[RMDB]
RNA sequence: GGGAACGACUCGAGUAGAGUCGAAAAGAUAUGGAGAGUAGGGAGAAGGCAGUCGGAAACGACUGCAACUUCGAGGAUCUACCUCCUAAGUCAAACAACGUGUCGAUGUUCGCAUCGACACGUUGAACUUCAUUUAACAGUUCGCUGUUAAAUGAAGAAAAGAAACAACAACAACAAC
Reactivity to DMS in 0.01 (KOAc 150mM, MgCl2 10mM, bicine 150mM(pH8.5), 24C), signal-to-noise 3, nucleotides 027 to 126: g010a020u000a180u020g010g000a020g000a240g010u000a010g000g000g000a010g010a030a010g010g000c000a010g010u010c000g020g010a020a040a070c000g020a010c000u000g000c010a010a030c020u000u000c000g000a110g020g000a060u010c000u000a010c010c000u000c000c000u010a010a060g010u000c020a120a120a270c010a010a010c010g010u000g000u000c000g020a010u000g020u000u020c250g020c010a000u000c010g010a010c000a000c000g000u000u000g000a050a150
Reactivity to 2A3 in 0.01 (KOAc 150mM, MgCl2 10mM, bicine 150mM(pH8.5), 24C), signal-to-noise 3, nucleotides 027 to 126: g010a010u020a010u080g000g010a000g020a070g010u010a010g010g000g000a020g000a000a010g030g000c010a000g000u000c000g010g030a030a030a010c010g000a000c000u000g000c010a060a110c010u010u010c010g080a260g000g020a010u010c000u000a000c010c000u000c000c000u000a040a010g010u010c020a100a090a160c010a040a000c010g010u000g010u000c010g000a010u010g030u100u120c300g010c170a010u000c000g020a010c000a000c000g000u010u000g000a000a000

Chemical mapping of a 177-nucleotide RNA with DMS and 2A3. For 2A3, 15,884 sequencing reads were counted. Reactivities are given for positions 27 through 126. The DMS profile rests on 10,456 reads.